Structure probing data (2A3 and DMS) for a 177-nucleotide construct. It was measured as part of the RMDB library M2PK50. The DMS profile rests on 1,825 reads. Reactivities are given for positions 27 through 126. The RNA was probed in 150 mM KOAc, 10 mM MgCl2 and 150 mM bicine (pH 8.5) at 24 C. For 2A3, 2,563 sequencing reads were counted. For DMS the reverse transcriptase was MarathonRT.

RNA sequence: GGGAACGACUCGAGUAGAGUCGAAAAGCAACCACCUUCGGGUGGUUGCAAAUGACGAUGCACGAUGACGAAGACGAUGAUGCUGAAGACGACGACGAACAAAAAGACCCACGUUCGCGUGGGUCAAGUUGGUUUAUCUGUUCGCAGAUAAACCAACAAAAGAAACAACAACAACAAC
Reactivity to 2A3 in 0.01 (KOAc 150mM, MgCl2 10mM, bicine 150mM(pH8.5), 24C), signal-to-noise 2, nucleotides 027 to 126: g000c000a000a000c020c000a020c010c020u050u100c190g150g000g020u000g010g000u000u000g010c010a000a010a000u050g020a010c030g020a030u050g030c020a010c040g060a060u100g050a030c020g050a060a040g030a010c020g020a020u040g030a040u060g000c040u030g020a040a020g040a020c030g010a010c020g040a010c040g070a120a060c080a060a080a030a000a020g000a000c000c000c000a000c010g010u040u040c260g000c000g010u000g000g020g000u000c000a010a010
Reactivity to DMS in 0.01 (KOAc 150mM, MgCl2 10mM, bicine 150mM(pH8.5), 24C), signal-to-noise 2, nucleotides 027 to 126: g000c000a020a020c000c010a000c000c020u000u020c210g040g010g040u000g000g000u000u000g010c010a010a020a080u010g010a040c020g010a100u010g010c050a060c040g000a060u010g020a090c090g020a060a070g010a050c070g000a080u000g000a090u000g010c020u010g020a100a110g050a060c060g010a080c050g000a060c070g020a080a050c170a050a060a070a120a120g000a000c000c000c000a010c000g020u000u000c200g040c000g060u000g000g000g010u000c000a020a000